The record gives the reactivity of an RNA of 177 nucleotides to 2A3. The RNA was probed in 150 mM KOAc, 10 mM MgCl2 and 150 mM bicine (pH 8.5) at 24 C. 2A3 adducts were read by reverse transcription with SuperScript II with manganese.
RNA sequence: GGGAACGACUCGAGUAGAGUCGAAAAGGUCAUCUAGCUACCCGUGCAUGCCUGGAGAUUGGAGAAUAAUUGACGAUGCAGCAGUCGGCUUAUUGGCUCUUGGGCACGCGUGGUUAGAUGACCAUCAGCUGCACGUAGAGUUCGCUCUACGUGCAGCAAAAGAAACAACAACAACAAC
Reactivity to 2A3 in 0.01 (KOAc 150mM, MgCl2 10mM, bicine 150mM(pH8.5), 24C), signal-to-noise 3, nucleotides 027 to 126: g000g000u010c000a000u040c000u000a000g000c020u020a000c040c050c000g010u000g010c060a120u240g050c000c010u000g050g000a050g010a090u170u300g110g060a170g090a090a040u090a020a060u060u070g000a000c030g020a060u080g070c130a110g000c060a040g140u010c000g040g040c010u000u030a020u010u060g090g030c000u000c000u010u000g040g000g000c000a000c010g000c010g010u000g000g010u000u000a000g000a010u010g000a000c000c000a010u000c000a000